[RMDB]
This 207-nucleotide RNA was probed chemically with 2A3. Conditions: 150 mM KOAc, 10 mM MgCl2 and 150 mM bicine (pH 8.5), 24 C. Reactivities are given for positions 27 through 156.
RNA sequence: GGGAACGACUCGAGUAGAGUCGAAAACUGGAGCCUGUGCCCAGGCAGACCCUGUCACGGCCCCUGGGAUGGUUGGCAUGCUUAGUGAAGGUUUUGGGGUUGUCUUGGGAUGGCAGGCAGGUUUGGAUUAGGGAGGGCCUGCCUUGGUGGGACCAGCCGUACCUCACAAGUUCGCUUGUGAGGUACGAAAAGAAACAACAACAACAAC
Reactivity to 2A3 in 0.01 (KOAc 150mM, MgCl2 10mM, bicine 150mM(pH8.5), 24C), signal-to-noise 1, nucleotides 027 to 156: c000u010g080g020a070g050c010c010u040g050u060g020c000c000c000a000g000g000c010a000g150a050c000c000c000u110g120u210c130a040c050g080g020c010c010c020c030u110g010g090g080a120u110g040g030u280u200g030g060c050a050u270g010c020u070u090a070g010u020g140a130a070g070g000u150u100u130u130g050g010g020g000u010u010g000u030c020u030u040g000g020g000a010u060g120g030c020a000g010g020c000a020g080g000u000u080u120g020g020a140u130u200a130g000g000g100a010g010g060g000c020c010u000g000c000c000u050u140g000g020u020g000g020g050a030c000c000a000g020c010